Structure probing data (2A3) for a 177-nucleotide construct. The 2A3 profile rests on 388 reads.
RNA sequence: GGGAACGACUCGAGUAGAGUCGAAAAGAAGAAUGUUAUUACUAUCUAGCGGACGGCUCUUAUGUCCCAAGGGUAGACGGAGACACUUUGAUAGUCGAGGAACCAAUGUCGUUCACUGGUCAUAGAGCCCAGGAGAGUCGUUCGCGACUCUCCUGGGAAAAGAAACAACAACAACAAC
Reactivity to 2A3 in 0.01 (KOAc 150mM, MgCl2 10mM, bicine 150mM(pH8.5), 24C), signal-to-noise 1, nucleotides 027 to 126: g030a020a000g170a000a060u210g020u110u060a240u180u090a080c000u000a000u050c020u000a000g000c110g000g000a000c000g050g030c000u010c000u080u300a120u300g020u010c030c000c110a000a020g000g000g000u030a020g060a110c120g000g000a000g030a000c000a000c000u000u060u050g010a100u200a110g000u000c030g070a070g090g120a000a000c000c000a030a090u060g000u000c000g030u000u000c110a110c220u030g130g090u200c110a050u080a060g150a130g040

Source: RMDB library OK1LIB, as collected in RNAgym.